[RMDB]
This 177-nucleotide RNA was probed chemically with 2A3. 2A3 adducts were read by reverse transcription with SuperScript II with manganese. The data come from the RNA Mapping Database (RMDB), library OK1LIB. The RNA was probed in 150 mM KOAc, 10 mM MgCl2 and 150 mM bicine (pH 8.5) at 24 C.
RNA sequence: GGGAACGACUCGAGUAGAGUCGAAAAACGAUCACGAGCGCGACGGCGACGAGCCGUAACGCCGAGAUUAUGCGGCGUGCGGAAUCGUUUCUCGAAGUAUUUGCGCUCGAGGAAUCCGUCGAUCCGGGGGGUAGCCUCAGUUCGCUGAGGCUACCCCAAAAGAAACAACAACAACAAC
Reactivity to 2A3 in 0.01 (KOAc 150mM, MgCl2 10mM, bicine 150mM(pH8.5), 24C), signal-to-noise 1, nucleotides 027 to 126: a000c000g000a000u000c000a000c130g000a000g120c010g000c010g030a110c070g010g000c000g000a000c010g000a000g040c000c000g000u000a030a000c000g000c000c000g010a000g010a000u180u300a270u240g270c070g000g000c000g000u000g000c060g000g000a060a300u070c000g070u000u000u000c260u000c000g200a220a020g120u030a160u190u000u240g120c030g040c000u000c000g010a060g030g030a000a000u000c060c050g010u000c000g170a220u040c020c020g070g000